[RMDB]
The record gives the reactivity of an RNA of 177 nucleotides to 2A3.
RNA sequence: GGGAACGACUCGAGUAGAGUCGAAAACAACAAUUUUAUUGGCCGGUGAUGAAUCACAAGAAUAAAUUCAUGGCAAUCCUGCAACAUCAUCAGUGAAUGAGCAUGGAACAAUGGGAUGAUUCAACCGGGCCUUUCACCAUUUCGAUGGUGAAAGGCCAAAAGAAACAACAACAACAAC
Reactivity to 2A3 in 0.01 (KOAc 150mM, MgCl2 10mM, bicine 150mM(pH8.5), 24C), signal-to-noise 2, nucleotides 027 to 126: c010a010a000c000a010a070u080u000u210u300a220u170u140g110g020c000c000g240g000u000g020a080u050g000a000a000u000c000a000c020a060a060g100a240a000u130a070a170a000u080u010c020a010u000g010g000c000a000a020u080c000c000u060g000c000a000a060c000a250u170c000a000u000c020a010g110u100g300a080a150u170g000a220g220c020a000u080g010g000a040a050c170a120a000u180g000g050g000a040u000g000a000u120u000c040a130a130c010c000g050
Annotation:
The 2A3 profile rests on 429 reads. Source: RMDB library OK1LIB, as collected in RNAgym. The reactions ran in a buffer of 150 mM KOAc, 10 mM MgCl2 and 150 mM bicine (pH 8.5), at 24 C.